The record gives the reactivity of an RNA of 177 nucleotides to DMS and 2A3. Values cover nucleotides 27 to 126. Conditions: 150 mM KOAc, 10 mM MgCl2 and 150 mM bicine (pH 8.5), 24 C.
RNA sequence: GGGAACGACUCGAGUAGAGUCGAAAAGAUAUGGACCGUCUACCCACCUUCCGCGUAGCGAAGAACCAACUAUUAUCGGAAACGAUAAUAGUUGGGGAGCUACGGUGAAGAGGACGGUCCUAAGUCAGUAAUACAUCUUGUUCGCAAGAUGUAUUACAAAAGAAACAACAACAACAAC
Reactivity to DMS in 0.01 (KOAc 150mM, MgCl2 10mM, bicine 150mM(pH8.5), 24C), signal-to-noise 7, nucleotides 027 to 126: g020a140u010a180u010g010g010a000c000c000g010u000c000u010a210c030c010c030a300c160c010u000u000c010c100g000c030g020u000a010g000c000g010a130a130g000a130a240c000c000a010a010c000u000a000u000u000a010u010c000g000g000a080a110a210c000g000a000u000a000a000u000a000g010u000u000g010g000g000g000a070g000c000u000a000c010g020g000u000g010a030a010g000a120g010g000a010c010g010g000u000c000c000u000a000a070g010u010c180a130
Reactivity to 2A3 in 0.01 (KOAc 150mM, MgCl2 10mM, bicine 150mM(pH8.5), 24C), signal-to-noise 7, nucleotides 027 to 126: g100a080u280a220u300g000g000a000c000c000g020u000c020u160a300c030c020c000a040c030c010u000u020c040c040g250c040g140u000a000g000c020g110a300a020g020a100a070c000c000a000a000c010u000a000u010u000a000u010c010g030g070a150a050a050c010g000a000u000a000a000u010a010g010u000u000g000g000g000g000a010g000c010u000a010c000g020g100u160g010a000a010g030a000g000g010a000c010g020g000u000c000c000u000a000a000g020u010c140a010